[RMDB]
RNA sequence: GGGAACGACUCGAGUAGAGUCGAAAAGGACUUUGCAAUUAUACCAAUGAUCAGCAACUCAAACAUGCCGAAGAUAGUGUUGAAGAGCUUUUCGAUGGUAGGAUGUUCGCUAUUUCGGGGUGGGUAAGACUGAUGUUAGUUUCGACUAACAUCAGUCAAAAGAAACAACAACAACAAC
Reactivity to DMS in 0.01 (KOAc 150mM, MgCl2 10mM, bicine 150mM(pH8.5), 24C), signal-to-noise 5, nucleotides 027 to 126: g000g020a100c110u000u000u000g030c080a080a060u010u010a120u010a030c050c040a020a170u010g010a020u000c030a010g000c010a050a210c110u000c060a040a050a060c060a040u000g010c110c090g000a080a110g000a100u010a110g010u000g000u010u000g010a050a050g000a300g010c010u000u000u000u000c030g020a080u000g020g010u000a030g010g010a060u010g010u000u000c080g000c120u010a080u000u010u010c070g000g010g010g010u010g000g020g000u000a060a090
Reactivity to 2A3 in 0.01 (KOAc 150mM, MgCl2 10mM, bicine 150mM(pH8.5), 24C), signal-to-noise 5, nucleotides 027 to 126: g000g000a050c030u090u100u120g000c050a050a110u150u050a050u070a110c010c020a030a080u120g010a020u020c020a010g000c000a010a050c010u010c060a080a100a060c020a040u090g090c060c070g070a080a020g070a140u190a060g080u060g030u070u070g020a060a020g020a010g020c010u030u030u020u050c020g020a040u050g040g020u010a020g030g040a030u050g050u060u060c060g000c040u070a100u060u080u090c050g030g000g020g040u160g010g000g000u050a070a040